This 177-nucleotide RNA was probed chemically with 2A3 and DMS. For 2A3, 7,001 sequencing reads were counted. For DMS the reverse transcriptase was MarathonRT. Reactivities are given for positions 27 through 126.

[RMDB]
RNA sequence: GGGAACGACUCGAGUAGAGUCGAAAAGAUAUGGAUCUUAAUGAGCUCGAUAAGUCGGUAUCGGAAACGAUAUACGACUUUUGACGAGCUCUAAGAUCCUAAGUCAAAACUCACGUUCGCGUGAGAACCAUACACCAUUGUUCGCAAUGGUGUAUGGAAAAGAAACAACAACAACAAC
Reactivity to 2A3 in 0.01 (KOAc 150mM, MgCl2 10mM, bicine 150mM(pH8.5), 24C), signal-to-noise 4, nucleotides 027 to 126: g020a000u050a030u140g000g000a000u010c000u100u080a280a230u300g000a020g020c030u030c100g210a170u070a300a000g000u020c020g000g000u030a010u020c000g010g000a070a010a030c040g000a020u010a010u110a170c000g000a000c020u030u000u000u000g050a060c110g000a000g000c000u020c000u010a000a000g000a000u000c000c000u000a070a030g030u020c020a030a030a080a240c000u010c000a000c000g050u120u100c300g010c000g140u000g000a000g010a010a010
Reactivity to DMS in 0.01 (KOAc 150mM, MgCl2 10mM, bicine 150mM(pH8.5), 24C), signal-to-noise 4, nucleotides 027 to 126: g010a050u000a300u000g000g000a000u000c000u010u000a040a190u010g010a010g030c010u000c000g030a180u000a030a010g020u010c010g010g020u000a000u000c000g010g000a080a080a150c010g020a010u000a020u000a120c010g010a010c000u000u000u000u000g010a200c160g010a020g000c000u000c010u000a000a000g010a010u000c000c010u000a010a090g000u000c010a160a080a100a160c010u000c010a000c000g020u010u020c280g030c000g030u000g010a010g000a070a220